[RMDB]
RNA sequence: GGGAACGACUCGAGUAGAGUCGAAAAUCAACACAGUGGAACCCGGGCAACAGUUCAGGCCUUGGCCCAAGGGCAAGGACUUGUCUCCAGAAAGCACUGUAGGUGUGGCCUCCAGCUUAUCCAAGUCGGAGAAGUUAAUAUUCGUAUUAACUUCUCCAAAAGAAACAACAACAACAAC
Reactivity to 2A3 in 0.01 (KOAc 150mM, MgCl2 10mM, bicine 150mM(pH8.5), 24C), signal-to-noise 3, nucleotides 027 to 126: u060c000a010a050c040a000c020a060g040u060g020g040a040a060c020c030c010g040g010g010c040a100a070c020a080g010u040u040c010a010g000g060c010c000u040u060g100g010c000c030c000a030a040g020g010g000c010a020a030g010g030a040c000u050u060g020u040c030u000c030c010a040g070a070a040a000g040c020a000c040u030g020u080a030g030g060u060g020u030g050g030c010c010u000c010c010a020g020c020u030u030a040u090c020c010a030a000g300u070c070
Reactivity to DMS in 0.01 (KOAc 150mM, MgCl2 10mM, bicine 150mM(pH8.5), 24C), signal-to-noise 8, nucleotides 027 to 126: u000c050a090a090c100a060c070a050g010u010g000g010a090a110c080c040c060g010g000g010c060a070a050c100a050g010u000u000c050a060g010g000c010c010u000u010g010g020c030c020c030a110a090g010g000g010c010a040a050g000g000a030c030u000u010g010u000c060u010c030c040a100g000a090a110a110g010c040a030c030u000g020u000a060g010g020u000g020u000g000g010c030c020u000c030c040a070g010c050u000u000a070u000c050c050a070a150g000u010c180

Overview
An RNA of 177 nucleotides, treated with 2A3 and DMS and read out base by base. The 2A3 profile rests on 8,057 reads.